Overview:
Source: RMDB library OK2TST, as collected in RNAgym. Chemical mapping of a 177-nucleotide RNA with 2A3 and DMS.
RNA sequence: GGGAACGACUCGAGUAGAGUCGAAAAUCGGUGCGCUCACUGUGUGUCCUCUUUAGUCCUUAUUCGCUUCGACAGUCACGUUGACGGGCAACAAAAAACCCUCGACAGCUGAGCUAGCUGCACGAGAACGUGCAUCAGGUUUCGACCUGAUGCACGUAAAAGAAACAACAACAACAAC
Reactivity to 2A3 in 0.01 (KOAc 150mM, MgCl2 10mM, bicine 150mM(pH8.5), 24C), signal-to-noise 2, nucleotides 027 to 126: u090c030g000g020u020g000c090g030c030u060c030a050c060u010g040u000g000u010g020u120c000c000u020c030u060u080u090a060g040u090c020c030u110u090a090u180u140c070g030c060u050u040c010g040a030c030a060g030u080c040a020c110g020u030u030g020a020c050g000g000g040c050a100a040c050a010a120a040a020a030a020c040c000c000u010c010g000a020c000a010g000c010u030g100a100g120c030u050a000g020c010u010g000c080a080c140g040a010g000a040
Reactivity to DMS in 0.01 (KOAc 150mM, MgCl2 10mM, bicine 150mM(pH8.5), 24C), signal-to-noise 3, nucleotides 027 to 126: u010c050g020g050u020g000c090g010c060u000c040a080c100u000g010u000g010u000g040u000c010c030u000c050u010u000u010a130g000u000c010c020u000u000a140u010u010c090g010c100u010u030c050g010a110c080a100g010u000c070a040c130g010u000u000g000a090c250g020g000g020c060a050a050c100a010a050a100a120a070a100c050c060c000u000c010g030a200c010a050g000c030u000g000a120g040c190u020a050g020c000u000g000c050a060c040g000a050g020a130
Conditions: 150 mM KOAc, 10 mM MgCl2 and 150 mM bicine (pH 8.5), 24 C.